Notes:
This 177-nucleotide RNA was probed chemically with 2A3 and DMS. High 2A3 reactivity points to a flexible backbone, as in loops and unpaired stretches. 2A3 adducts were read by reverse transcription with SuperScript II with manganese. The data come from the RNA Mapping Database (RMDB), library OK2TST.
RNA sequence: GGGAACGACUCGAGUAGAGUCGAAAACUGGCGGCGCUCUACAUGGUGGCCAAGCGCCGCGACGGGCAGCCGACGUUCACGUUCAACGCGGCACUGCAGGCGUCCAUGGCCGAGGCGCAGAGCUUCCAUGGAUGGAAUCUUUCGAGAUUCCAUCCAUAAAAGAAACAACAACAACAAC
Reactivity to 2A3 in 0.01 (KOAc 150mM, MgCl2 10mM, bicine 150mM(pH8.5), 24C), signal-to-noise 1, nucleotides 027 to 126: c010u030g200g030c050g050g030c050g000c020u040c010u100a080c030a120u180g070g040u110g070g090c020c020a040a000g000c010g000c010c010g010c030g020a050c060g020g060g030c060a030g020c030c040g080a250c010g040u020u070c110a120c220g030u150u100c060a050a020c010g000c000g050g000c040a020c010u060g010c060a030g000g080c020g030u000c020c060a100u040g020g010c000c020g010a030g010g000c010g000c040a020g000a030g070c030u080u080c010c020
Reactivity to DMS in 0.01 (KOAc 150mM, MgCl2 10mM, bicine 150mM(pH8.5), 24C), signal-to-noise 2, nucleotides 027 to 126: c050u000g020g030c030g040g000c260g010c010u000c090u000a120c130a080u010g020g030u000g020g030c050c020a160a080g010c010g010c010c010g000c000g010a100c120g010g010g000c090a110g010c060c030g010a130c030g010u000u010c120a110c170g010u000u010c130a020a040c020g000c000g000g020c020a070c100u000g010c080a120g000g000c000g010u010c000c060a100u010g000g030c100c020g000a100g000g000c080g010c040a110g000a090g010c030u010u020c060c070